Notes
Source: RMDB library OK2TST, as collected in RNAgym. This 177-nucleotide RNA was probed chemically with DMS and 2A3. For 2A3 the reverse transcriptase was SuperScript II with manganese. Conditions: 150 mM KOAc, 10 mM MgCl2 and 150 mM bicine (pH 8.5), 24 C.
RNA sequence: GGGAACGACUCGAGUAGAGUCGAAAACUUCGGUGGCGAACUGGCUGCCCGGUACGCUCUGGGCGGUGAUCUGGUCAAGCAGCCGGUCCUGCGCCUCGGCGGACAGAUAGCCCAGCAGCCCCUCGGCCCACUCCUUCUCGUUCGCGAGAAGGAGUGGAAAAGAAACAACAACAACAAC
Reactivity to DMS in 0.01 (KOAc 150mM, MgCl2 10mM, bicine 150mM(pH8.5), 24C), signal-to-noise 1, nucleotides 027 to 126: c060u000u010c100g020g000u000g000g010c020g000a100a240c070u000g020g000c020u000g010c020c030c060g060g020u000a060c130g000c000u000c080u000g000g020g000c000g010g020u000g000a060u000c010u000g050g040u000c110a120a090g050c160a150g000c000c010g000g000u000c070c020u000g000c090g010c000c010u000c190g000g000c020g020g000a120c210a010g000a050u010a090g000c080c030c000a060g010c100a220g000c010c010c030c010u010c110g020g020c070
Reactivity to 2A3 in 0.01 (KOAc 150mM, MgCl2 10mM, bicine 150mM(pH8.5), 24C), signal-to-noise 1, nucleotides 027 to 126: c020u120u070c040g130g040u150g010g010c020g000a120a040c040u010g050g000c040u040g010c000c020c020g050g040u070a050c040g010c020u040c060u110g000g050g000c050g040g000u120g010a040u030c060u160g040g060u180c050a130a070g000c030a060g030c070c010g000g040u020c000c020u110g000c030g100c060c000u030c010g000g000c030g000g010a020c010a040g040a050u060a020g030c000c000c000a020g000c020a020g030c000c000c000c020u000c010g120g010c010